[RMDB]
The record gives the reactivity of an RNA of 177 nucleotides to 2A3 and DMS. The 2A3 profile rests on 5,738 reads. For DMS the reverse transcriptase was MarathonRT. For 2A3 the reverse transcriptase was SuperScript II with manganese. It was measured as part of the RMDB library TTRDEL. The DMS profile rests on 7,363 reads.

RNA sequence: GGGAACGACUCGAGUAGAGUCGAAAAGAUAUGGAACGUUCACACGGGAGCAAUGAUGUCGGAAACGAUUGAGCUUAGUGUGAGACGUUCCUAAGUCAAAACUAAGGCUCCUUCGGGAGCCUUAGAACAUUCUAGUUAUCUUCGGAUAACUAGAAUGAAAAGAAACAACAACAACAAC
Reactivity to 2A3 in 0.01 (KOAc 150mM, MgCl2 10mM, bicine 150mM(pH8.5), 24C), signal-to-noise 3, nucleotides 027 to 126: g000a020u080a030u120g000g010a020a000c010g010u020u020c010a010c010a010c000g300g300g050a030g000c020a070a300u210g080a030u110g080u030c020g010g030a070a070a040c020g000a010u010u060g010a010g000c000u010u020a020g000u000g000u020g000a000g000a000c000g000u000u000c000c000u000a020a000g040u000c050a040a040a110a190c000u000a000a000g020g000c000u000c010c040u050u170c300g040g000g000a000g050c000c000u000u000a000g000a000a000
Reactivity to DMS in 0.01 (KOAc 150mM, MgCl2 10mM, bicine 150mM(pH8.5), 24C), signal-to-noise 6, nucleotides 027 to 126: g010a060u000a300u000g000g010a020a020c010g010u000u000c000a010c000a010c010g000g010g010a010g000c020a160a160u010g020a080u000g000u000c010g010g000a130a100a210c000g010a010u000u000g010a070g000c000u000u000a180g010u000g010u000g000a060g010a020c000g010u000u000c000c000u000a010a080g010u000c040a090a070a100a200c010u000a000a010g010g000c010u000c000c000u000u010c210g020g010g000a010g000c000c000u000u000a000g000a070a160